[RMDB]
RNA sequence: GGGAACGACUCGAGUAGAGUCGAAAAAAAACGAGCGUAAUCGCGUCUUGACUAGACUGUUUGUGACGUGAGUAGGGAUCUAUCCCAGUGUGCAUAGCGCACAAUACGCUGAUUAACAGUCACGGAAUCCUUGAUGAUCUUUCGAGAUCAUCAAGGAAAAAGAAACAACAACAACAAC
Reactivity to 2A3 in 0.01 (KOAc 150mM, MgCl2 10mM, bicine 150mM(pH8.5), 24C), signal-to-noise 2, nucleotides 027 to 126: a000a000a000a000c090g030a020g040c010g030u050a080a070u000c010g010c000g020u010c010u150u200g030a050c020u010a070g060a070c020u020g010u060u010u010g110u040g020a000c010g000u010g010a010g040u120a120g060g000g020a020u030c040u210a150u060c060c010c010a020g030u020g000u010g000c040a110u160a250g020c040g000c000a000c000a000a020u090a030c010g000c020u030g000a020u000u060a050a010c030a030g010u020c020a000c080g110g070a100a050
Reactivity to DMS in 0.01 (KOAc 150mM, MgCl2 10mM, bicine 150mM(pH8.5), 24C), signal-to-noise 4, nucleotides 027 to 126: a000a000a030a030c120g010a040g000c020g020u000a040a060u000c030g010c000g000u000c000u000u000g020a070c090u010a090g010a030c050u020g010u000u000u000g010u000g000a010c010g030u000g000a030g000u010a120g010g000g000a070u000c200u010a110u000c000c000c010a210g010u000g000u000g010c020a130u010a090g010c170g000c030a010c020a060a140u000a020c010g010c000u000g010a100u010u000a050a030c090a050g010u000c010a120c200g000g000a140a090